An RNA of 207 nucleotides, treated with 2A3 and DMS and read out base by base.
RNA sequence: GGGAACGACUCGAGUAGAGUCGAAAACGGGGUUGGCUAUAGUUGAUUUCGAACCGUAUGCUUAUGUAUAUGGAAUGAUUUGUACGCUUUACGCAUGUGUACACUCACUCUCAGUUCACUCUUGUGAGAGAAGGGAGAGAGAGAUAUUUUGCGAUUAGGAUUCUUUUUUCUUCGGAAGGGGGAAUUCAAAAGAAACAACAACAACAAC
Reactivity to 2A3 in 0.01 (KOAc 150mM, MgCl2 10mM, bicine 150mM(pH8.5), 24C), signal-to-noise 2, nucleotides 027 to 156: c060g020g020g020g000u010u050g020g000c030u050a020u040a150g010u020u040g050a150u020u060u050c020g030a060a030c020c000g020u010a010u030g000c020u210u140a090u260g020u030a030u000a020u050g030g000a070a090u040g020a070u070u040u110g010u010a000c010g020c010u070u090u040a030c040g010c020a020u040g000u000g000u020a010c000a000c010u010c000a030c000u000c000u000c000a080g060u030u040c030a040c010u020c000u100u220g060u150g080a000g010a000g010a010a030g070g010g000a000g000a000g000a000g000a000g010a000u040a080u090u170u080u060g020c010g020a030u000u070a040
Reactivity to DMS in 0.01 (KOAc 150mM, MgCl2 10mM, bicine 150mM(pH8.5), 24C), signal-to-noise 2, nucleotides 027 to 156: c070g020g010g040g050u000u000g010g000c040u000a100u000a090g050u010u000g000a110u000u000u010c020g020a070a210c010c000g070u010a030u000g000c020u000u000a120u010g040u000a030u000a030u000g030g020a070a170u000g000a100u010u010u000g020u000a080c070g000c050u010u000u010a130c070g020c060a030u010g020u000g020u000a010c040a090c100u000c000a170c000u010c000u000c010a060g000u000u000c040a100c020u000c030u000u000g020u020g020a090g000a060g010a060a100g000g000g000a030g000a050g020a050g000a030g000a050u000a020u000u000u000u000g020c010g000a180u010u000a180
About this RNA: For DMS, 5,655 sequencing reads were counted. The data come from the RNA Mapping Database (RMDB), library OK3TST. 2A3 adducts were read by reverse transcription with SuperScript II with manganese. The RNA was probed in 150 mM KOAc, 10 mM MgCl2 and 150 mM bicine (pH 8.5) at 24 C.